[RMDB]
RNA sequence: GGGAACGACUCGAGUAGAGUCGAAAAGGUAAUGGACGACGGCGGCGUGUGGCGAACAGGGAUACCGGUAGUCAGUGUCUGGAACAUCCCAAGGGGCGGCGGAGCUAGCACCCCGACACGUUAGGGCAAAACUUCGCACGGUUCGCCGUGCGAAGAACAAUAAAUGCGUCUUCGGACGCAUUUAUUGAAAAGAAACAACAACAACAAC
Reactivity to DMS in 0.01 (KOAc 150mM, MgCl2 10mM, bicine 150mM(pH8.5), 24C), signal-to-noise 1, nucleotides 027 to 156: g030g050u000a050a090u010g010g020a090c010g000a040c030g040g020c050g000g060c010g010u000g040u100g000g030c060g000a080a070c060a080g010g020g040a080u000a100c020c020g000g040u020a040g030u010c060a030g020u010g010u010c020u010g000g000a110a100c040a120u000c010c010c010a130a130g030g020g040g000c030g000g020c030g020g010a140g020c100u000a090g020c070a040c000c000c000c000g040a020c050a060c040g030u000u010a070g040g020g010c080a040a020a060a070c020u000u010c000g000c000a010c030g010g020u000u000c290g040c030c000g030u000g030c020g000a020a000g030a050a080
Reactivity to 2A3 in 0.01 (KOAc 150mM, MgCl2 10mM, bicine 150mM(pH8.5), 24C), signal-to-noise 2, nucleotides 027 to 156: g090g000u130a060a090u060g050g050a000c030g030a020c050g000g010c010g000g040c000g010u030g010u020g030g010c000g040a050a000c050a080g000g000g000a010u040a080c000c030g020g090u070a030g070u070c070a010g070u020g070u080c020u050g020g020a090a090c030a050u040c040c000c030a070a050g000g010g000g010c060g010g000c040g000g080a050g040c090u090a050g000c030a060c040c000c000c000g010a010c010a010c090g080u100u150a060g010g020g000c010a000a010a010a100c000u000u000c000g000c000a010c020g020g000u070u040c100g070c070c000g000u010g000c020g000a000a000g000a000a010
The record gives the reactivity of an RNA of 207 nucleotides to DMS and 2A3. For DMS the reverse transcriptase was MarathonRT. 2A3 is a SHAPE reagent: it acylates the 2'-hydroxyl of flexible nucleotides of all four kinds. The DMS profile rests on 2,377 reads. It was measured as part of the RMDB library M2RFPK. The RNA was probed in 150 mM KOAc, 10 mM MgCl2 and 150 mM bicine (pH 8.5) at 24 C.